[RMDB]
RNA sequence: GGGAACGACUCGAGUAGAGUCGAAAAAGGGAGGGUUUUGUUAUUAGAGCCUACUAGGCCUCUAGCUGAGAAUGUUCAUAGGCAGCUUGGGGGUGAACCUUUUAUGGUCCAAGCAACACUGAGAAUGUGUAUCCAACCUUUUCGAAGGUUGGAUACAAAAAGAAACAACAACAACAAC
Reactivity to 2A3 in 0.01 (KOAc 150mM, MgCl2 10mM, bicine 150mM(pH8.5), 24C), signal-to-noise 1, nucleotides 027 to 126: a000g020g020g000a120g000g060g010u110u140u060u000g180u130u040a140u010u050a050g050a010g110c000c000u060a120c030u040a110g060g120c070c020u000c020u020a000g000c020u020g000a000g080a280a150u120g030u070u070c110a130u160a110g130g030c010a000g040c020u080u070g000g000g010g000g020u100g030a000a040c030c060u100u050u020u200a150u110g000g000u030c020c000a060a000g040c030a020a030c010a010c090u080g010a050g020a150a120u100g000
Reactivity to DMS in 0.01 (KOAc 150mM, MgCl2 10mM, bicine 150mM(pH8.5), 24C), signal-to-noise 2, nucleotides 027 to 126: a060g000g000g000a160g000g020g000u000u010u020u010g020u000u010a110u000u000a060g010a060g010c010c010u000a090c170u010a120g030g000c090c050u000c010u000a020g020c060u000g000a050g010a080a120u010g020u010u010c180a060u010a140g020g000c030a120g010c010u010u030g020g000g000g000g020u000g020a070a130c010c010u000u010u000u000a040u010g030g030u010c010c010a000a050g010c030a060a040c100a040c120u020g000a100g000a080a080u000g010